[RMDB]
RNA sequence: GGGAACGACUCGAGUAGAGUCGAAAAACGAUUUUCGAAUCGUACCAGGGGGUCAGUUUCCCGAUGAGGCACUUGUCAGCUCUGAAGCCUCCACGGAGCUUGGAUUUAGUGCCGAGGGAGAUGACGGAGGCACCCAUCUCUUACUGUUCGCAGUAAAGCCUACUAUCUGAUUCGUCAGAUAGUAGGCAAAAGAAACAACAACAACAAC
Reactivity to 2A3 in 0.01 (KOAc 150mM, MgCl2 10mM, bicine 150mM(pH8.5), 24C), signal-to-noise 3, nucleotides 027 to 156: a000c010g010a010u030u050u110u160c190g110a050a000u000c010g000u030a070c050c050a050g020g000g000g000g010u010c040a060g100u020u240u030c010c000c000g000a100u170g080a110g020g020c020a010c070u150u140g020u050c030a010g000c000u000c000u010g030a120a020g000c010c010u000c020c020a040c010g000g000a020g000c040u100u160g110g020a050u140u160u300a040g000u010g000c000c000g000a030g010g020g000a030g020a090u080g010a030c080g000g010a010g020g000c000a020c000c030c000a090u050c100u020c010u090u020a010c000u040g050u070u100c250g000c120a000g080u260a020a000a300
Reactivity to DMS in 0.01 (KOAc 150mM, MgCl2 10mM, bicine 150mM(pH8.5), 24C), signal-to-noise 2, nucleotides 027 to 156: a070c020g000a090u000u000u000u000c120g020a060a030u000c010g000u000a090c050c070a160g040g020g000g020g040u000c030a110g020u010u020u010c000c000c010g000a150u020g030a170g000g050c010a030c030u020u000g010u010c040a090g040c000u000c000u000g000a040a100g010c070c020u000c010c030a300c040g010g010a010g000c010u000u030g030g000a100u000u000u000a070g050u020g040c020c000g000a100g070g000g050a060g050a010u000g010a100c050g050g020a070g030g060c020a050c010c000c010a300u000c010u020c060u000u000a090c000u000g010u010u000c170g000c010a030g020u000a070a090a300